Structure probing data (2A3 and DMS) for a 177-nucleotide construct. For 2A3, 430 sequencing reads were counted. The RNA was probed in 150 mM KOAc, 10 mM MgCl2 and 150 mM bicine (pH 8.5) at 24 C. For DMS, 1,169 sequencing reads were counted. It was measured as part of the RMDB library OK1LIB. For DMS the reverse transcriptase was MarathonRT.
[RMDB]
RNA sequence: GGGAACGACUCGAGUAGAGUCGAAAAAAUAUGAAAAACAAAAUUAAAAGGCGUGCUUUGACUUCACCAGAAAGAUGGGAAAUUCGCCAACUAAUUGCCAGCGGUGCUGCUUCCAUCGAUGACUAAACGGGACGAUAUAUUUCGAUAUAUCGUCCCGAAAAGAAACAACAACAACAAC
Reactivity to 2A3 in 0.01 (KOAc 150mM, MgCl2 10mM, bicine 150mM(pH8.5), 24C), signal-to-noise 1, nucleotides 027 to 126: a000a000u300a090u170g070a090a090a000a000a000c040a010a100a100a030u130u050a080a110a080a000g070g040c070g000u070g020c010u060u050u110g000a000c020u070u060c000a120c100c060a000g180a170a090a000g010a010u000g000g040g170a000a000a000u050u100c030g080c000c000a000a000c000u060a020a020u060u080g030c060c070a040g020c060g040g070u000g040c000u080g000c000u110u030c090c020a040u090c030g090a040u060g040a000c020u050a000a120a000
Reactivity to DMS in 0.01 (KOAc 150mM, MgCl2 10mM, bicine 150mM(pH8.5), 24C), signal-to-noise 1, nucleotides 027 to 126: a080a010u140a070u040g000a010a060a020a020a100c120a050a110a000a050u020u020a070a090a060a030g000g020c050g030u000g010c110u000u010u000g020a180c050u030u000c050a090c080c020a160g010a030a100a050g000a110u000g040g050g000a040a070a110u050u030c000g020c020c010a060a160c240u010a030a100u080u000g000c030c090a040g030c100g010g030u000g010c020u030g000c080u000u000c030c000a030u000c000g000a120u000g000a040c060u000a010a080a170